[RMDB]
RNA sequence: GGGAACGACUCGAGUAGAGUCGAAAAAAGGCUCAUUAUAUCAGUUAUGGUUCCUUAGAUCGUUAACAGUUACUUGGAUAAUUGUGGUAAUUCUAGAGCUUAUACAUGCAAUUAAAACAUAAACCUUGUACGGUAGUCUUUUCGAAGACUACCGUACAAAAGAAACAACAACAACAAC
Reactivity to 2A3 in 0.01 (KOAc 150mM, MgCl2 10mM, bicine 150mM(pH8.5), 24C), signal-to-noise 2, nucleotides 027 to 126: a000a010g090g000c040u030c030a090u120u160a010u010a080u040c000a010g040u020u090a190u180g150g000u000u000c000c000u000u080a100g000a050u050c030g050u160u020a050a010c000a020g020u000u150a130c020u260u260g100g000a090u070a050a020u140u040g010u000g000g110u110a050a090u010u000c050u060a010g000a000g010c000u070u010a020u020a010c050a090u070g040c000a000a130u060u070a120a110a080a000c050a040u080a020a070a000c010c000u000u000